[RMDB]
RNA sequence: GGGAACGACUCGAGUAGAGUCGAAAACUAUAACGGGUAACGGGGAAUAUGGGUUUUAUUCCGGAGAGGGAGCCUGAGAGAUGGCUGCCACGUCCAAGGACGGCAGCAGGCGCGAAACUUACCCAAUUUCCCCACAUAAGUUCGCUUAUGUGGGGAAAAAAGAAACAACAACAACAAC
Reactivity to DMS in 0.01 (KOAc 150mM, MgCl2 10mM, bicine 150mM(pH8.5), 24C), signal-to-noise 2, nucleotides 027 to 126: c070u060a110u060a140a110c300g000g010g000u000a020a060c090g020g020g000g000a030a050u030a030u000g040g000g010u030u020u030u000a090u020u000c060c050g030g000a110g020a210g020g000g010a300g010c000c000u050g000a030g000a060g000a050u050g000g010c010u000g020c000c000a080c220g030u000c010c040a090a080g000g020a070c010g010g050c050a050g000c060a010g000g030c050g030c110g000a100a040a130c170u000u010a050c000c000c000a110a300u020
Reactivity to 2A3 in 0.01 (KOAc 150mM, MgCl2 10mM, bicine 150mM(pH8.5), 24C), signal-to-noise 1, nucleotides 027 to 126: c020u070a030u060a130a080c050g030g000g000u000a020a030c130g160g000g040g180a040a020u090a060u160g080g030g000u100u040u000u050a060u080u030c000c010g000g020a050g010a050g000g080g000a010g000c000c030u040g040a030g010a000g040a060u160g100g000c020u000g000c020c030a020c070g030u000c000c020a050a000g020g000a010c020g000g000c030a000g000c020a040g000g000c000g000c010g030a010a000a000c030u000u020a050c000c000c020a000a000u000
Overview:
This 177-nucleotide RNA was probed chemically with DMS and 2A3. The RNA was probed in 150 mM KOAc, 10 mM MgCl2 and 150 mM bicine (pH 8.5) at 24 C. It was measured as part of the RMDB library RFM100. In probing experiments dimethyl sulfate is read out at A N1 and C N3, which are open when not base-paired. For 2A3, 913 sequencing reads were counted. For DMS, 2,062 sequencing reads were counted.